[RMDB]
RNA sequence: GGGAACGACUCGAGUAGAGUCGAAAAGGCAAUGCAAUGAUGAUUUUAAUGGGUUUUAGCAGUGGCGGCGUCAGUCGCCGUGAGCUUUCAAUCCAAAAAACGACUUCUCUUUCCACUGAGCAUUGCAUCACAUUUCAGAAUUCGUUCUGAAAUGUGAAAAAGAAACAACAACAACAAC
Reactivity to DMS in 0.01 (KOAc 150mM, MgCl2 10mM, bicine 150mM(pH8.5), 24C), signal-to-noise 9, nucleotides 027 to 126: g000g020c010a010a010u000g010c000a140a100u020g000a070u020g010a180u000u010u000u000a050a270u000g000g010g010u000u000u020u000a010g010c010a300g000u010g010g010c000g010g000c000g000u040c260a060g020u000c000g010c000c000g000u010g000a150g000c010u000u020u000c300a010a000u010c010c010a000a040a060a020a030a040c080g000a120c080u010u000c040u010c100u010u010u000c020c010a100c130u010g000a140g010c000a010u000u000g010c010a230
Reactivity to 2A3 in 0.01 (KOAc 150mM, MgCl2 10mM, bicine 150mM(pH8.5), 24C), signal-to-noise 9, nucleotides 027 to 126: g080g000c010a010a010u010g000c010a070a090u150g040a050u050g110a160u050u030u050u100a160a120u070g000g010g000u000u010u010u020a010g000c010a010g010u020g050g000c000g000g010c010g060u190c180a110g020u020c000g000c000c000g000u000g010a070g000c000u030u060u040c050a000a010u000c000c000a040a030a000a000a020a020c090g080a060c040u080u020c030u020c000u050u070u020c040c030a110c100u080g030a010g010c000a010u000u010g000c000a000

An RNA of 177 nucleotides, treated with DMS and 2A3 and read out base by base. Conditions: 150 mM KOAc, 10 mM MgCl2 and 150 mM bicine (pH 8.5), 24 C. Source: RMDB libraries RFM100 and RFMREP, as collected in RNAgym. Values cover nucleotides 27 to 126. 2A3 adducts were read by reverse transcription with SuperScript II with manganese.